[RMDB]
RNA sequence: GGGAACGACUCGAGUAGAGUCGAAAAGUCUAGGUUGCAGCCAUUACAAAUAAACCUGCUGCAAACGUUUGUGUAUGUAUUUGUGUGAACAUAAACUUUCAUUGCUCUUGGAUAUAUAGCUGGUGGAAUGGCUAGAACAUAUGACAGGUGUAUACUAGUACGUGACCAUAUUCGUAUGGUCACGUACAAAAGAAACAACAACAACAAC
Reactivity to DMS in 0.01 (KOAc 150mM, MgCl2 10mM, bicine 150mM(pH8.5), 24C), signal-to-noise 1, nucleotides 027 to 156: g010u010c010u020a130g070g030u000u000g040c050a030g030c000c100a100u000u020a300c080a110a110a100u010a110a100a090c060c020u000g040c060u000g000c090a010a060a050c150g020u010u010u000g020u000g010u010a030u010g030u000a190u000u000u000g110u000g010u000g000a120a110c040a050u000a020a040a030c010u000u010u000c080a140u000u000g000c030u000c040u010u000g000g000a150u010a070u000a050u000a160g000c000u010g000g000u020g010g010a070a030u000g010g000c010u040a030g020a020a030c060a040u010a100u010g040a060c050a010g050g000u000g000u000a100u000a040c050u010a230
Reactivity to 2A3 in 0.01 (KOAc 150mM, MgCl2 10mM, bicine 150mM(pH8.5), 24C), signal-to-noise 3, nucleotides 027 to 156: g030u030c050u080a010g050g120u030u080g140c030a000g000c000c010a040u060u080a090c090a070a150a110u190a080a100a060c030c080u040g010c020u040g000c000a040a020a070c070g000u000u040u090g010u000g020u040a070u080g060u030a140u070u250u120g160u050g030u050g120a010a010c010a000u060a050a050a020c000u050u090u090c130a100u070u110g010c010u060c010u140u050g080g020a010u030a000u010a000u030a300g010c000u000g000g020u030g000g040a020a000u000g030g020c010u000a060g000a090a050c040a040u110a000u110g070a030c000a000g000g050u070g030u070a100u100a060c050u130a060